[RMDB]
An RNA of 177 nucleotides, treated with 2A3 and DMS and read out base by base. The data come from the RNA Mapping Database (RMDB), libraries RFM100 and RFMREP.
RNA sequence: GGGAACGACUCGAGUAGAGUCGAAAAACGCUAGCGUACGCGCUAGCGAAAGGUCAGGAAGGCUGCAUUAAGCGGUCUGCUGGGGAGUAAAUGCCCACCUGGCUAAGCUCCAUCUACGGAUGGAGCAUCACGCAUGAUCUUUCGAGAUCAUGCGUGAAAAAGAAACAACAACAACAAC
Reactivity to 2A3 in 0.01 (KOAc 150mM, MgCl2 10mM, bicine 150mM(pH8.5), 24C), signal-to-noise 3, nucleotides 027 to 126: a000c020g010c000u000a000g000c000g020u010a000c240g000c000g000c070u000a000g000c000g000a020a000a020g000g000u000c000a000g000g080a080a010g000g020c000u000g000c000a150u130u220a210a030g000c000g000g020u000c000u020g000c040u070g000g000g010g000a070g030u160a120a230a100u170g030c000c000c000a010c000c000u000g010g000c000u020a080a010g000c000u000c010c000a010u000c010u020a040c230g060g000a020u000g000g010a010g010c000a010
Reactivity to DMS in 0.01 (KOAc 150mM, MgCl2 10mM, bicine 150mM(pH8.5), 24C), signal-to-noise 2, nucleotides 027 to 126: a130c010g000c000u000a000g000c000g030u050a060c210g030c000g010c000u000a000g000c030g000a020a010a060g010g020u000c000a000g040g000a210a000g010g000c000u000g010c020a300u020u070a140a220g010c000g000g000u000c000u000g000c220u020g000g010g000g020a030g000u070a060a180a070u050g010c040c000c000a170c000c010u030g070g000c000u000a010a140g000c020u000c010c020a040u000c020u000a070c140g000g000a000u000g010g000a010g000c010a000